This 170-nucleotide RNA was probed chemically with 2A3 and DMS. For DMS the reverse transcriptase was MarathonRT. The reactions ran in a buffer of 150 mM KOAc, 10 mM MgCl2 and 150 mM bicine (pH 8.5), at 24 C.
[RMDB]
RNA sequence: GGGAACGACUCGAGUAGAGUCGAAAAAGUGCUUUGCUAAUAAGCACCGGUCCUUCACACAAUGGUAUCAUGAGCAUGUUGGUGGUGUCUAUGACAACUCUAUCACAUGCCCAUUGACAGUUGCAGUACGGACUACCGUUCGCGGUAGUCAAAAGAAACAACAACAACAAC
Reactivity to 2A3 in 0.01 (KOAc 150mM, MgCl2 10mM, bicine 150mM(pH8.5), 24C), signal-to-noise 9, nucleotides 027 to 129: a000g000u000g000c000u030u040u060g060c070u100a170a080u140a250a020g000c000a010c010c000g030g020u020c010c000u110u170c080a060c010a020c020a040a110u090g140g010u120a060u190c030a030u060g010a000g010c000a010u010g020u080u100g180g000u000g000g000u020g010u000c070u100a250u270g050a050c020a040a060c030u010c010u070a010u020c000a000c000a000u000g000c000c000c000a040u040u140g030a020c020a030g010u030u030g040c030a020g030u090a050c080g070
Reactivity to DMS in 0.01 (KOAc 150mM, MgCl2 10mM, bicine 150mM(pH8.5), 24C), signal-to-noise 9, nucleotides 027 to 129: a110g000u000g030c000u000u010u010g000c240u050a110a050u040a040a030g010c000a020c040c080g050g030u020c030c000u010u020c110a090c060a210c060a030a030u000g040g060u050a140u000c050a030u000g020a090g030c020a030u020g020u010u000g050g020u000g010g030u000g020u000c060u050a100u120g040a070c060a060a040c050u000c000u040a000u000c030a020c030a000u060g030c030c020c000a000u020u050g020a000c110a160g060u050u000g000c050a080g030u030a080c230g000

Background
For DMS, 44,248 sequencing reads were counted. In probing experiments dimethyl sulfate is read out at A N1 and C N3, which are open when not base-paired.